[RMDB]
RNA sequence: GGGAACGACUCGAGUAGAGUCGAAAAGUUUCUAAGUUCGCUUAGAAACAAAUCCAGCGCGGAAACGAACGUGCCUGACCCAAUUCGUUAAAGAUUUUCAAAAAACGUUCCUCUUCGGAGGAACGAACAUAUGUCAGAUCUUCGGAUCUGACAUAUGAAAAGAAACAACAACAACAAC
Reactivity to DMS in 0.01 (KOAc 150mM, MgCl2 10mM, bicine 150mM(pH8.5), 24C), signal-to-noise 3, nucleotides 027 to 126: g010u000u000u000c000u010a000a010g010u000u010c260g040c000u000u010a000g000a010a000a020c000a040a120a080u020c130c140a170g000c010g030c030g000g000a090a050a040c060g000a050a070c020g000u000g010c020c080u010g020a170c040c030c030a120a070u010u000c010g020u000u000a150a110a110g020a140u010u010u000u010c100a010a060a020a050a110a080c010g010u000u000c010c000u010c000u000u020c170g000g010a010g020g000a000a020c000g000a030a070